[RMDB]
The record gives the reactivity of an RNA of 207 nucleotides to 2A3.
RNA sequence: GGGAACGACUCGAGUAGAGUCGAAAAAUAGCUCACACCGCUACACUCUCAAUGGCAGACGGUGGAGAUCAAAAGCAGCGUAAUGAGACAACUAAUAAUACGCUUGACCUGAACCGCACUGUUACUAAACAGGACCUGUAUGCUAUCGGGCGUGUGCGUACAGGUCAACGUUCGCGUUGACCUGUACAAAAGAAACAACAACAACAAC
Reactivity to 2A3 in 0.01 (KOAc 150mM, MgCl2 10mM, bicine 150mM(pH8.5), 24C), signal-to-noise 2, nucleotides 027 to 156: a030u110a020g000c020u040c020a160c000a040c050c130g000c040u140a000c010a000c000u050c020u000c000a000a090u010g040g020c010a000g050a100c050g020g050u080g050g010a120g000a050u110c020a000a120a000a040g090c050a000g000c010g050u040a050a100u130g080a020g080a220c020a070a000c100u190a070a190u170a170a070u080a130c020g070c000u080u100g050a060c010c010u000g060a070a060c020c020g000c100a050c010u000g010u010u170a130c110u210a100a110a000c010a000g100g000a060c040c060u110g010u260a030u000g000c010u000a000u050c010g000g020g020c030g010u020g040u040g000c030

For 2A3 the reverse transcriptase was SuperScript II with manganese. The reactions ran in a buffer of 150 mM KOAc, 10 mM MgCl2 and 150 mM bicine (pH 8.5), at 24 C.